[RMDB]
RNA sequence: GGGAACGACUCGAGUAGAGUCGAAAAGAUAUGGAUCGUGCAGACAUGCCUUAAAACCACACAACAAUAUCGGAAACGAUAUACUGUUGUGUGGUUUUAAGGCAACAGCUGUUACGAUCCUAAGUCACCUAGGUUAAUCGUUCGCGAUUAACCUAGGAAAAGAAACAACAACAACAAC
Reactivity to DMS in 0.01 (KOAc 150mM, MgCl2 10mM, bicine 150mM(pH8.5), 24C), signal-to-noise 1, nucleotides 027 to 126: g020a040u030a300u000g030g010a020u000c000g010u000g000c010a020g000a030c060a090u000g000c000c010u010u010a020a000a000a000c000c000a000c000a000c000a010a030c000a070a040u000a010u000c000g000g010a140a150a190c000g000a020u000a020u010a060c300u000g010u000u000g020u010g010u000g010g010u000u000u000u000a000a000g000g010c000a010a000c150a100g010c020u000g000u020u000a020c020g000a000u010c000c010u010a010a080g010u000c060a200